Notes:
Conditions: 150 mM KOAc, 10 mM MgCl2 and 150 mM bicine (pH 8.5), 24 C. The record gives the reactivity of an RNA of 177 nucleotides to DMS and 2A3.
[RMDB]
RNA sequence: GGGAACGACUCGAGUAGAGUCGAAAAUGACAGUAUUAUUAAAGUAGGAAAUGAUACAGCGAUGGAAAUGUCUCGUCGAGUUGCUAAAGAGGAAGGUAUUUUAGCAGGUAUUUCAUCAGGUGCUGCGAUUGAGGGAGUUGUUCGCAACUCCCUCAAUAAAAGAAACAACAACAACAAC
Reactivity to DMS in 0.01 (KOAc 150mM, MgCl2 10mM, bicine 150mM(pH8.5), 24C), signal-to-noise 3, nucleotides 027 to 126: u000g000a100c120a070g000u010a000u020u020a020u000u010a070a140a180g030u010a060g000g030a090a040a040u000g010a050u000a060c050a120g020c040g030a050u020g010g000a030a080a100u010g000u010c040u030c040g000u020c060g010a090g010u020u010g010c020u000a030a020a020g000a090g020g000a050a050g000g010u000a040u010u000u000u000a040g000c030a050g000g000u010a030u010u000u010c090a040u020c030a090g020g000u020g010c030u000g010c120g020
Reactivity to 2A3 in 0.01 (KOAc 150mM, MgCl2 10mM, bicine 150mM(pH8.5), 24C), signal-to-noise 2, nucleotides 027 to 126: u180g000a020c030a020g040u010a060u050u000a100u020u190a110a110a120g060u050a050g020g130a000a030a160u050g020a010u000a070c030a030g080c000g080a020u070g000g100a000a080a130u150g040u010c020u000c020g120u030c070g030a060g150u070u090g020c020u030a010a020a000g090a060g160g020a070a020g240g070u120a130u080u070u000u020a020g010c030a000g000g000u060a060u000u060u040c000a030u000c060a040g070g000u040g020c000u000g000c060g050
For DMS, 4,346 sequencing reads were counted.
For 2A3, 1,098 sequencing reads were counted.
For 2A3 the reverse transcriptase was SuperScript II with manganese.